Chemical mapping of a 177-nucleotide RNA with DMS and 2A3. It was measured as part of the RMDB library TTRDEL. Conditions: 150 mM KOAc, 10 mM MgCl2 and 150 mM bicine (pH 8.5), 24 C. Reactivities are given for positions 27 through 126.
RNA sequence: GGGAACGACUCGAGUAGAGUCGAAAAGAUAUGGACCACCAUGAAGUUCAACAGCUCGGAAACGAGACAUGAACCAUGUGUGGUCCUAAGUCAAAUCUACUUCACGAGUUCGCUCGUGAAGUAGAAAGACACAAUAGUACUUCGGUACUAUUGUGUCAAAAGAAACAACAACAACAAC
Reactivity to DMS in 0.01 (KOAc 150mM, MgCl2 10mM, bicine 150mM(pH8.5), 24C), signal-to-noise 6, nucleotides 027 to 126: g020a050u010a300u000g000g020a010c000c010a010c010c000a010u000g010a140a140g020u000u000c000a040a110c240a180g010c000u010c000g000g000a100a100a170c010g000a010g000a030c090a170u000g000a010a000c000c000a010u000g000u020g040u000g000g010u000c000c000u000a010a070g010u000c030a080a100a140u000c000u000a000c000u000u000c000a010c000g000a020g010u000u020c280g010c000u000c000g020u000g000a000a000g010u000a000g000a010a050a110
Reactivity to 2A3 in 0.01 (KOAc 150mM, MgCl2 10mM, bicine 150mM(pH8.5), 24C), signal-to-noise 7, nucleotides 027 to 126: g020a010u060a050u100g000g000a000c000c000a000c000c000a010u010g110a290a070g010u000u010c020a080a070c040a240g050c000u010c010g020g040a060a080a060c010g000a000g030a030c020a120u080g000a000a000c000c000a010u040g300u030g000u000g080g000u000c000c000u000a000a000g000u000c010a000a010a070u020c000u000a000c000u000u000c010a000c000g000a010g010u080u100c230g120c160u000c000g010u010g000a010a000g000u000a000g000a000a000a000